[RMDB]
RNA sequence: GGGAACGACUCGAGUAGAGUCGAAAAGAUAUGGAAUGACUCCCCACCAUUUUUAUACGAGUCUUGGAUUUACUCUCGGAAACGAGAGUUGUCAGACUUGGUAUAAAAAUGAGGUCAUUCCUAAGUCGUACUACUAAUGCUUCGGCAUUAGUAGUACAAAAGAAACAACAACAACAAC
Reactivity to 2A3 in 0.01 (KOAc 150mM, MgCl2 10mM, bicine 150mM(pH8.5), 24C), signal-to-noise 2, nucleotides 027 to 126: g080a030u300a190u300g010g020a030a040u020g000a000c020u220c090c050c050c020a040c000c010a000u000u010u000u040u090a010u010a000c000g050a000g030u000c000u130u230g210g000a120u300u300u130a060c010u000c010u000c040g050g050a010a090a090c050g000a000g000a020g010u010u010g000u000c000a040g000a040c010u020u050g300g050u000a000u000a020a020a010a000a030u010g000a010g000g000u000c000a010u000u020c000c000u020a090a030g220u220c110
Reactivity to DMS in 0.01 (KOAc 150mM, MgCl2 10mM, bicine 150mM(pH8.5), 24C), signal-to-noise 1, nucleotides 027 to 126: g010a090u000a110u000g020g000a010a060u000g030a020c000u010c250c040c000c080a300c060c000a020u000u000u010u000u000a020u000a000c010g000a010g010u000c000u020u000g010g000a000u000u000u000a000c000u010c000u000c000g000g000a110a120a240c010g000a010g000a030g010u010u000g010u000c000a010g010a010c010u050u070g000g030u000a000u010a000a020a000a000a010u000g000a080g020g000u010c030a000u010u000c010c000u000a000a060g000u000c190
The data come from the RNA Mapping Database (RMDB), library TTRINS. The record gives the reactivity of an RNA of 177 nucleotides to 2A3 and DMS. Values cover nucleotides 27 to 126. DMS adducts were read by reverse transcription with MarathonRT. Conditions: 150 mM KOAc, 10 mM MgCl2 and 150 mM bicine (pH 8.5), 24 C. For 2A3, 2,157 sequencing reads were counted.